[RMDB]
RNA sequence: GGGAACGACUCGAGUAGAGUCGAAAAUGCUGCUGCAUUAGCUGCAAUUGCACCAAGUUGAAUUGAAUAAGUUAUAGGAGAUAGUACCCACCCACUUAUUCCUAAAGAAUAUAUAAAUACUACUAAGAUUAGUAUGAGCGUUCGCGCUCAUACUAAUAAAAGAAACAACAACAACAAC
Reactivity to DMS in 0.01 (KOAc 150mM, MgCl2 10mM, bicine 150mM(pH8.5), 24C), signal-to-noise 1, nucleotides 027 to 126: u000g000c030u000g000c010u020g030c220a070u010u020a010g000c070u010g000c020a040a020u000u010g010c020a200c070c060a110a190g000u010u000g000a070a090u040u010g010a060a080u020a150a130g010u020u020a140u020a180g020g000a080g030a030u010a070g000u000a040c020c030c010a030c020c030c070a010c000u030u000a020u000u000c000c030u010a080a000a080g000a040a110u000a080u060a280u040a040a000a110u030a120c010u000a190c020u020a020a160g000
Reactivity to 2A3 in 0.01 (KOAc 150mM, MgCl2 10mM, bicine 150mM(pH8.5), 24C), signal-to-noise 2, nucleotides 027 to 126: u060g000c000u020g020c010u030g030c050a150u010u290a100g000c030u030g000c010a020a220u140u090g020c010a010c030c040a120a020g100u090u100g270a210a160u100u000g080a020a040u060a100a060g110u150u070a070u110a300g020g020a030g060a190u120a000g100u090a060c000c020c020a030c000c040c000a000c020u000u010a000u010u040c000c060u060a080a040a130g090a070a060u130a000u110a020u100a300a160a030u130a100c050u040a070c010u060a210a050g060